[RMDB]
RNA sequence: GGGAACGACUCGAGUAGAGUCGAAAAGCUCUGUAAUGGGAUGGGAUCCGAAGCCCCAUUGAGGGAUAAUACAGGCUCUCCCAUCCGACUCCUAUUCCAACACGUCCUCGUCGUACAGAGUGGUAACUAAGGUAUAGCUCCUUCGGGAGCUAUACAAGUAAGCGAUAUACUUCGGUAUAUCGCUUACAAAAGAAACAACAACAACAAC
Reactivity to DMS in 0.01 (KOAc 150mM, MgCl2 10mM, bicine 150mM(pH8.5), 24C), signal-to-noise 2, nucleotides 027 to 156: g000c010u010c040u030g010u010a020a100u020g010g040g030a030u010g000g030g000a080u030c040c020g000a170a120g010c020c010c000c050a290u000u000g000a120g010g000g020a070u000a060a220u010a120c060a220g000g010c030u000c070u010c010c010c020a080u000c000c010g000a030c020u000c040c050u000a120u010u000c040c040a120a120c030a090c050g020u000c010c070u010c020g000u000c090g010u000a060c000a030g000a050g030u000g000g010u000a050a150c060u000a110a110g010g010u000a030u000a010g020c000u000c000c020u000u010c300g050g040g010a020g060c000u000a000u000a000c010a030a180
Reactivity to 2A3 in 0.01 (KOAc 150mM, MgCl2 10mM, bicine 150mM(pH8.5), 24C), signal-to-noise 1, nucleotides 027 to 156: g000c000u020c000u010g110u100a070a170u160g180g000g000a000u000g000g000g000a000u130c000c000g050a020a010g020c000c000c000c000a140u130u210g100a300g000g000g030a040u130a230a010u200a090c130a020g000g000c000u000c010u000c000c020c000a010u000c000c000g000a000c020u000c030c020u060a090u080u080c020c010a060a000c050a040c100g050u080c010c040u070c060g070u040c040g020u030a000c000a020g000a020g020u080g010g080u150a120a070c090u040a070a020g030g000u000a000u000a000g000c010u000c000c000u030u020c130g060g020g000a000g030c000u000a000u000a000c010a000a010